An RNA of 177 nucleotides, treated with 2A3 and DMS and read out base by base. Reactivities are rounded to 0.1 and cut off at 0 and 3. It was measured as part of the RMDB libraries RFM100 and RFMREP. As a SHAPE reagent, 2A3 marks flexible, mostly unpaired nucleotides at the ribose 2'-OH. For 2A3 the reverse transcriptase was SuperScript II with manganese. The RNA was probed in 150 mM KOAc, 10 mM MgCl2 and 150 mM bicine (pH 8.5) at 24 C.
[RMDB]
RNA sequence: GGGAACGACUCGAGUAGAGUCGAAAAAUCGGGGCUCAAAUCCACCACCGAGACCUGGCCGCACCCCUCACAGGGUGAUCGCGUAGGUCGGCGUUCUGUUCGGGUGGAAGCACGGGUGAGAACUCGUCUAUACGACGAUCUUCGGAUCGUCGUAUAGAAAAGAAACAACAACAACAAC
Reactivity to 2A3 in 0.01 (KOAc 150mM, MgCl2 10mM, bicine 150mM(pH8.5), 24C), signal-to-noise 4, nucleotides 027 to 126: a000u090c020g000g010g020g000c000u020c050a070a030a070u020c010c010a000c010c000a030c010c010g020a020g020a030c000c010u010g040g030c020c010g020c010a000c000c020c000c000u080c030a100c030a010g000g010g000u020g020a060u130c070g010c080g140u100a060g010g030u000c010g000g010c030g040u120u050c060u130g160u090u150c060g090g000g020u020g010g020a030a010g040c040a030c060g000g000g010u030g020a060g010a070a050c010u010c020g020u010
Reactivity to DMS in 0.01 (KOAc 150mM, MgCl2 10mM, bicine 150mM(pH8.5), 24C), signal-to-noise 2, nucleotides 027 to 126: a100u030c070g010g030g000g040c020u020c030a100a110a120u000c000c000a120c000c040a120c030c010g020a070g000a030c010c000u000g080g010c000c050g000c010a000c010c000c000c000u030c300a090c250a210g010g000g020u020g020a030u010c100g020c160g040u020a040g000g090u000c000g020g010c200g030u020u040c120u000g000u030u000c030g000g020g010u000g000g020a050a050g040c180a080c130g000g060g000u000g000a210g000a090a040c000u000c050g000u000